Overview:
An RNA of 207 nucleotides, treated with 2A3 and DMS and read out base by base. Values cover nucleotides 27 to 156. The 2A3 profile rests on 3,162 reads. It was measured as part of the RMDB library RNAMAK. For DMS the reverse transcriptase was MarathonRT.

RNA sequence: GGGAACGACUCGAGUAGAGUCGAAAACGCUGGGCGUGAGAACAGUGCAUACAGGGAGGUAUCAUGCUACUGAAGCGCGCACGGUAGCAUGAUACCAUCGAUCUGUAUGUCACUGACACGCCUGUGCUGAAGCGCGCACGGCAACCGAAAGGUGCGAUCGAUUUAGAGUGUUCGCACUCUAAAUCGAAAAAGAAACAACAACAACAAC
Reactivity to 2A3 in 0.01 (KOAc 150mM, MgCl2 10mM, bicine 150mM(pH8.5), 24C), signal-to-noise 2, nucleotides 027 to 156: c040g010c060u110g010g000g000c000g000u030g020a110g080a240a100c030a010g000u020g000c000a000u000a000c000a010g000g010g000a030g010g010u000a000u000c010a000u000g030c000u000a000c000u020g020a170a020g000c000g000c000g000c010a020c000g020g010u000a000g000c000a000u000g000a000u000a000c000c000a010u010c020g000a010u000c000u000g000u000a000u010g000u050c010a000c000u010g010a000c000a000c000g000c000c010u000g000u050g020c020u120g050a070a020g010c010g000c000g000c020a030c020g100g000c070a120a160c010c000g010a070a070a040g010g000u030g010c020g030a070
Reactivity to DMS in 0.01 (KOAc 150mM, MgCl2 10mM, bicine 150mM(pH8.5), 24C), signal-to-noise 1, nucleotides 027 to 156: c070g060c070u000g020g000g000c000g040u000g010a090g040a170a220c000a040g030u000g010c000a040u000a000c000a010g010g010g010a040g040g030u000a040u000c010a020u000g010c010u010a080c000u020g000a080a060g060c010g030c010g000c020a300c000g000g000u000a000g040c000a040u000g000a030u000a000c000c000a060u010c070g000a020u000c000u040g000u000a020u000g020u010c030a000c020u000g020a140c000a020c000g030c000c000u000g030u020g000c030u020g010a100a040g000c000g010c010g050c000a010c020g040g050c020a130a300c030c040g000a110a170a180g000g020u000g010c070g000a140